[RMDB]
RNA sequence: GGGAACGACUCGAGUAGAGUCGAAAAACAAGAGAGGGCGUCACGUCAUCUUUUGUGGUUCAAAGGCCAACUGUCAUAAAAUAUCUGACAGUCUCUCUCAGAAGGGCAUCAAGACUCACGUCUACUACAGCUCAGAUAUCUUCGGAUAUCUGAGCUGAAAAGAAACAACAACAACAAC
Reactivity to DMS in 0.01 (KOAc 150mM, MgCl2 10mM, bicine 150mM(pH8.5), 24C), signal-to-noise 2, nucleotides 027 to 126: a030c000a040a040g020a020g000a060g010g030g010c000g000u000c170a060c060g030u000c010a050u000c010u020u000u000u000g000u010g000g000u000u080c130a060a060a170g010g020c030c100a150a080c010u000g000u010c010a020u020a040a120a220a200u010a100u000c190u040g010a010c000a000g000u010c080u000c060u000c090u000c120a080g010a060a060g010g000g020c050a150u000c100a000a100g000a040c020u010c120a080c260g000u000c010u000a030c130u000a110
Reactivity to 2A3 in 0.01 (KOAc 150mM, MgCl2 10mM, bicine 150mM(pH8.5), 24C), signal-to-noise 1, nucleotides 027 to 126: a000c030a050a010g030a000g000a040g040g000g010c010g100u250c210a070c210g060u010c010a070u070c000u080u050u000u020g000u020g000g030u100u000c070a170a000a020g050g060c000c010a040a010c030u010g000u000c040a090u120a140a280a210a100u260a110u100c060u010g010a000c000a010g040u010c000u000c010u000c000u000c050a090g020a110a020g020g000g050c000a070u070c020a070a030g040a030c030u060c030a030c050g040u040c010u000a060c040u030a010